[RMDB]
RNA sequence: GGGAACGACUCGAGUAGAGUCGAAAAUGUUGAAAUCAACUCGUCACGGUCGAUCGACUGGUCGAACUCGAAGCUGUACUUCGAACGAGCCGGCGUCGCUGAGAAACAGCGGUGAUCGCCAUGCAGAAUGCCAGUAAAUCUUCGGAUUUACUGGCAUAAAAGAAACAACAACAACAAC
Reactivity to 2A3 in 0.01 (KOAc 150mM, MgCl2 10mM, bicine 150mM(pH8.5), 24C), signal-to-noise 2, nucleotides 027 to 126: u140g000u040u100g060a150a040a040u210c020a020a040c020u040c100g160u090c040a030c080g090g260u280c050g050a030u010c040g100a100c010u060g000g030u050c010g000a060a080c020u020c020g010a040a000g030c100u130g060u290a110c010u020u010c000g020a070a090c000g050a040g020c020c030g030g010c060g080u090c000g000c000u040g080a070g190a210a150a040c010a010g000c000g040g000u000g030a030u050c030g000c000c000a010u030g000c000a000g100a230
Reactivity to DMS in 0.01 (KOAc 150mM, MgCl2 10mM, bicine 150mM(pH8.5), 24C), signal-to-noise 3, nucleotides 027 to 126: u010g000u030u000g000a160a120a160u000c050a040a070c080u010c070g010u020c020a080c070g000g000u000c030g000a020u010c030g010a160c040u020g000g020u020c020g000a080a110c130u000c020g010a030a020g020c160u000g020u010a300c030u000u000c020g000a010a110c030g020a180g010c020c010g020g030c300g000u000c010g040c010u000g000a170g010a090a140a180c050a040g030c000g000g020u010g010a000u000c020g010c010c010a060u000g010c040a090g010a110